This 207-nucleotide RNA was probed chemically with DMS and 2A3. Reactivities are given for positions 27 through 156. The RNA was probed in 150 mM KOAc, 10 mM MgCl2 and 150 mM bicine (pH 8.5) at 24 C. For DMS, 2,195 sequencing reads were counted.
RNA sequence: GGGAACGACUCGAGUAGAGUCGAAAAUACAUCUUAGUUUUAUAAGCUUGUUUCGUAUUAAAAUGUCGCAUGAUGGUGAAAUCGAAGGAUUACCGGAACGAGUUUCGGAUAUGGAACCAACCGUUAUCCUUAAAACGGAAUUAGCACGUUUACCUACGAAGUGAUACUGGUUCGCCAGUAUCACUUCAAAAGAAACAACAACAACAAC
Reactivity to DMS in 0.01 (KOAc 150mM, MgCl2 10mM, bicine 150mM(pH8.5), 24C), signal-to-noise 1, nucleotides 027 to 156: u010a060c050a080u000c080u010u000a120g020u000u020u000u000a000u000a150a130g000c050u000u010g020u000u000u000c000g040u060a090u010u010a000a070a030a070u000g010u000c040g060c110a140u000g000a110u000g040g030u010g010a060a110a090u000c000g020a100a040g020g000a140u000u000a030c060c000g000g020a040a130c080g010a180g020u000u000u010c030g000g020a230u000a070u000g020g010a000a020c010c020a120a190c070c010g010u000u000a100u000c020c030u000u020a030a030a050a070c030g040g000a110a100u000u000a050g000c060a060c040g000u010u000u000a100c050c020u000a160c240
Reactivity to 2A3 in 0.01 (KOAc 150mM, MgCl2 10mM, bicine 150mM(pH8.5), 24C), signal-to-noise 3, nucleotides 027 to 156: u140a030c030a100u050c050u120u160a050g080u080u060u080u090a160u060a090a010g000c030u020u020g010u010u000u030c020g020u060a070u090u170a110a120a080a040u190g070u090c010g000c070a020u080g020a100u130g120g120u080g080a070a080a070u130c150g020a060a000g000g000a010u030u050a030c080c110g000g020a110a070c120g040a080g100u000u010u020c050g020g050a140u080a150u300g020g000a010a010c010c000a000a010c020c000g000u010u030a030u020c000c020u010u020a030a100a020a010c010g000g020a020a020u050u040a060g000c020a020c060g050u030u060u080a090c040c020u020a030c090
The 2A3 profile rests on 1,376 reads.